[RMDB]
RNA sequence: GGGAACGACUCGAGUAGAGUCGAAAAUUAUACUCGCACGCAUACGUACAGUCUAUAAACUCAUCUAAAUUAUCUCCUGGAGAGCAUGUCACUAGGAAACAGUGAACAAGUAGGGUCACAACCACAGAGGAUAGCGGGAUUUCGAUCCCGCUAUCCUAAAAGAAACAACAACAACAAC
Reactivity to 2A3 in 0.01 (KOAc 150mM, MgCl2 10mM, bicine 150mM(pH8.5), 24C), signal-to-noise 1, nucleotides 027 to 126: u120u000a000u110a000c020u000c000g040c000a000c030g000c000a000u030a200c000g000u000a110c140a000g120u000c050u020a170u120a050a080a000c000u000c080a060u000c200u140a160a160a000u020u020a030u300c170u000c000c130u290g000g000a030g000a000g120c090a160u300g050u080c000a000c100u050a000g000g000a000a300a000c000a020g000u000g050a000a000c000a060a010g140u000a200g000g000g260u200c040a000c000a020a110c020c020a000c000a030g030

Structure probing data (2A3) for a 177-nucleotide construct. Source: RMDB library OK1LIB, as collected in RNAgym. Conditions: 150 mM KOAc, 10 mM MgCl2 and 150 mM bicine (pH 8.5), 24 C.